[RMDB]
Structure probing data (2A3) for a 207-nucleotide construct. 2A3 adducts were read by reverse transcription with SuperScript II with manganese. Conditions: 150 mM KOAc, 10 mM MgCl2 and 150 mM bicine (pH 8.5), 24 C. The 2A3 profile rests on 412 reads.
RNA sequence: GGGAACGACUCGAGUAGAGUCGAAAAACAAGAAUAGAGUUAGCUUGACUGGCUUAGACCAGUCAUGAUUUACCAUCUGAGGCUGAGAGGAACCAGCUUUCUUCAGAACAUAUGACCAAUCCAAGUAGAGUAGACAAAGCCAGGGUUCUAUCAACAAGAGUCAUUACGAGUUCGCUCGUAAUGACUCAAAAGAAACAACAACAACAAC
Reactivity to 2A3 in 0.01 (KOAc 150mM, MgCl2 10mM, bicine 150mM(pH8.5), 24C), signal-to-noise 1, nucleotides 027 to 156: a000c040a020a000g100a030a010u140a130g080a050g010u080u070a080g000c000u000u000g000a000c000u000g000g090c040u200u110a160g050a300c000c030a010g010u000c030a000u040g000a000u050u010u090a010c040c010a040u060c040u040g040a030g150g020c050u060g050a030g010a030g230g100a110a050c010c060a010g030c000u000u050u000c030u030u040c000a000g020a080a010c000a020u130a030u170g000a000c000c000a010a010u100c040c000a080a000g000u070a000g000a080g030u130a010g040a070c170a080a010a000g000c000c040a000g000g000g000u010u000c030u020a100u100c000a000a030c110a110a080